Structure probing data (DMS and 2A3) for a 177-nucleotide construct.
For DMS the reverse transcriptase was MarathonRT.
The reactions ran in a buffer of 150 mM KOAc, 10 mM MgCl2 and 150 mM bicine (pH 8.5), at 24 C.
For 2A3, 21,403 sequencing reads were counted.
The data come from the RNA Mapping Database (RMDB), library OK2TST.
RNA sequence: GGGAACGACUCGAGUAGAGUCGAAAAGAGCCACCAUGCCUGGCCUAUUUUAUUUUAUUUUUUGAGACGGAGUCCUGCUCUGUUGCCCAGACUGGAGUGCAGUGGCACGAUCUCUGCUCACUGCAACGAUAUCACUAUGUUUCGACAUAGUGAUAUCAAAAGAAACAACAACAACAAC
Reactivity to DMS in 0.01 (KOAc 150mM, MgCl2 10mM, bicine 150mM(pH8.5), 24C), signal-to-noise 9, nucleotides 027 to 126: g010a180g000c020c030a060c060c060a070u010g010c040c060u000g010g000c030c030u000a020u010u000u010u000a050u020u010u010u010a040u000u000u010u000u010u010g000a080g010a080c050g010g000a100g010u000c060c090u000g010c020u000c020u010g010u000u000g010c040c020c010a130g010a080c130u000g010g010a110g020u000g010c010a010g020u000g000g010c010a040c130g000a090u010c100u010c040u000g000c010u010c010a030c060u000g010c050a070a060c160
Reactivity to 2A3 in 0.01 (KOAc 150mM, MgCl2 10mM, bicine 150mM(pH8.5), 24C), signal-to-noise 9, nucleotides 027 to 126: g040a010g040c010c010a010c020c020a080u110g010c000c010u020g020g010c000c010u040a070u020u150u050u020a130u040u140u040u050a150u060u120u060u000u070u120g060a050g010a020c020g010g030a030g030u030c010c030u020g030c010u010c010u030g060u050u120g020c000c000c010a060g040a120c070u130g040g060a130g050u020g000c010a000g000u050g030g000c010a010c050g090a140u070c100u000c020u060g000c050u060c020a030c020u050g000c010a020a020c060